[RMDB]
RNA sequence: GGGAACGACUCGAGUAGAGUCGAAAAGCGGCCUUGACGCCGCAGCGGCGUUAGCGGCACUCACUUACCCGAAUCACUGACUAAUGUCAGCUCAUCGGGACGCGUUCAUUUGCUGCCUUGCUGCAACUCCAUCCCCGAGGUUCGCCUCGGGGAUGGAAAAAGAAACAACAACAACAAC
Reactivity to 2A3 in 0.01 (KOAc 150mM, MgCl2 10mM, bicine 150mM(pH8.5), 24C), signal-to-noise 2, nucleotides 027 to 126: g000c000g000g000c020c010u120u210g070a100c130g000c000c020g000c020a000g010c000g060g010c010g050u120u130a050g000c030g030g030c010a010c020u040c010a030c000u070u240a230c000c000c000g010a050a070u120c090a040c040u020g040a010c020u210a270a100u300g010u020c000a000g000c020u030c040a070u000c000g050g030g110a130c030g020c030g110u060u090c060a140u080u060u250g000c020u000g010c010c010u000u170g000c010u020g020c010a020a150c050
Reactivity to DMS in 0.01 (KOAc 150mM, MgCl2 10mM, bicine 150mM(pH8.5), 24C), signal-to-noise 1, nucleotides 027 to 126: g010c000g020g000c000c020u000u020g010a090c160g000c000c000g000c010a000g000c030g050g000c000g000u020u000a030g000c020g040g030c000a130c170u000c040a030c030u020u010a140c040c010c000g040a000a080u010c290a150c000u000g010a020c000u020a100a080u000g010u000c000a000g000c110u010c240a300u000c000g010g010g020a050c190g000c150g000u010u020c170a230u000u000u000g000c040u000g040c000c050u000u000g000c000u020g010c000a140a120c160
An RNA of 177 nucleotides, treated with 2A3 and DMS and read out base by base. The RNA was probed in 150 mM KOAc, 10 mM MgCl2 and 150 mM bicine (pH 8.5) at 24 C. For DMS, 579 sequencing reads were counted. Reactivities are given for positions 27 through 126. As a SHAPE reagent, 2A3 marks flexible, mostly unpaired nucleotides at the ribose 2'-OH.